[RMDB]
RNA sequence: GGGAACGACUCGAGUAGAGUCGAAAAUCAUGGUGGUUCGCCACCAUGAACUGUCUAGUCGCUAGAAAACGAUCAAAACUAGCGACUAGACUAACGAUCGAUCUGGGGGACAGUUCGCUGUCCCCAAACUACUAAAUGAAUUCGUUCAUUUAGUAGUAAAAGAAACAACAACAACAAC
Reactivity to DMS in 0.01 (KOAc 150mM, MgCl2 10mM, bicine 150mM(pH8.5), 24C), signal-to-noise 9, nucleotides 027 to 126: u000c000a000u000g000g030u000g000g010u000u020c250g030c000c000a000c000c000a000u000g000a010a130c100u000g020u000c000u000a000g000u000c000g010c000u000a000g010a100a070a110a130c140g010a090u000c080a070a070a100a140c000u000a000g010c000g010a000c000u000a000g000a010c000u010a020a050c190g000a080u000c110g000a100u010c080u010g010g020g010g010g000a020c000a010g010u000u020c200g020c000u000g000u000c000c000c000c010a000a010
Reactivity to 2A3 in 0.01 (KOAc 150mM, MgCl2 10mM, bicine 150mM(pH8.5), 24C), signal-to-noise 4, nucleotides 027 to 126: u030c000a000u000g000g000u010g020g040u030u040c200g060c040c000a000c000c000a000u000g000a010a020c010u010g000u000c000u000a000g000u000c000g010c010u000a010g070a100a190a040a050c130g100a180u160c090a020a050a040a190c010u010a010g010c000g000a000c000u000a000g000a000c000u010a000a010c010g050a060u150c030g020a020u030c060u180g100g000g000g000g000a000c000a000g000u020u030c110g040c070u000g000u000c000c000c000c000a000a000